[RMDB]
RNA sequence: GGGAACGACUCGAGUAGAGUCGAAAAGAACAUCAGUUCGCUGAUGUUCAAAGGCCGAGUAGUGUUGGGUCGGGAAAGGCCAUACAUAAACAUUCACUCAGAAAACAACGUCCUUCGGGACGUUGAAGAGUAUGUAUCACUUCGGUGAUACAUACUCAAAAGAAACAACAACAACAAC
Reactivity to 2A3 in 0.01 (KOAc 150mM, MgCl2 10mM, bicine 150mM(pH8.5), 24C), signal-to-noise 7, nucleotides 027 to 126: g010a000a000c000a000u000c000a000g030u060u090c130g000c110u000g000a000u000g000u010u010c010a020a030a010g060g030c030c020g000a010g010u050a010g000u010g060u090u080g060g000g020u040c090g060g050g080a100a110a070g040g000c030c010a010u110a050c060a040u210a030a090a000c010a020u050u070c040a010c020u030c020a010g150a050a110a020a020c010a010a000c000g000u010c000c000u020u050c150g080g000g000a000c000g000u000u000g000a010a000
Reactivity to DMS in 0.01 (KOAc 150mM, MgCl2 10mM, bicine 150mM(pH8.5), 24C), signal-to-noise 5, nucleotides 027 to 126: g010a020a000c000a000u000c000a000g000u000u000c250g020c000u010g000a000u000g010u000u000c000a030a080a090g010g020c030c020g010a050g010u000a060g010u000g010u000u010g020g000g030u010c020g010g010g020a090a090a140g000g010c020c010a100u000a090c220a120u000a100a020a020c040a030u000u000c150a030c020u000c030a100g010a080a050a080a190c010a000a000c000g010u000c000c000u000u010c160g020g000g010a000c000g010u000u000g010a020a060
An RNA of 177 nucleotides, treated with 2A3 and DMS and read out base by base. Values cover nucleotides 27 to 126. High 2A3 reactivity points to a flexible backbone, as in loops and unpaired stretches. The 2A3 profile rests on 17,451 reads.